The data come from the RNA Mapping Database (RMDB), libraries RFM100 and RFMREP. Chemical mapping of a 177-nucleotide RNA with DMS and 2A3. Values are in units of 0.01, from 0 to 300, in steps of 10. The RNA was probed in 150 mM KOAc, 10 mM MgCl2 and 150 mM bicine (pH 8.5) at 24 C.
RNA sequence: GGGAACGACUCGAGUAGAGUCGAAAAUAUUUGACACCGUUUAUGUGGAAGCGUUUACUUGGACCCCAAACGUAGUUGUCUGGUUAGCUCUAGUUCUUAGAGGAUCAAAGUAGAGGAGUAUGUGCUGGAUGUACCUAGUCUUCGGACUAGGUACAUCAAAAGAAACAACAACAACAAC
Reactivity to DMS in 0.01 (KOAc 150mM, MgCl2 10mM, bicine 150mM(pH8.5), 24C), signal-to-noise 3, nucleotides 027 to 126: u020a040u000u030u020g010a100c060a080c040c040g030u020u000u020a070u010g020u010g010g030a100a110g000c100g040u000u000u000a040c120u010u000g010g000a150c050c010c010c030a070a070a070c060g020u020a100g030u010u010g010u000c020u000g000g000u010u020a110g020c020u000c010u000a030g050u000u000c070u030u000a080g010a060g010g010a070u010c050a040a070a080g000u010a030g000a060g000g010a100g000u010a030u000g010u010g000c110u010g010
Reactivity to 2A3 in 0.01 (KOAc 150mM, MgCl2 10mM, bicine 150mM(pH8.5), 24C), signal-to-noise 1, nucleotides 027 to 126: u070a160u000u210u260g190a030c000a000c000c030g020u000u100u000a300u010g060u050g040g120a020a020g090c080g000u000u000u130a000c000u070u060g180g000a200c000c000c040c010a000a070a000c000g010u010a060g000u100u070g000u070c010u000g020g030u130u130a010g040c060u040c000u000a010g150u190u000c000u000u100a010g000a000g080g080a070u160c160a020a000a080g010u040a000g060a000g180g030a000g040u040a010u250g000u090g000c060u000g090

Reactivities are given for positions 27 through 126.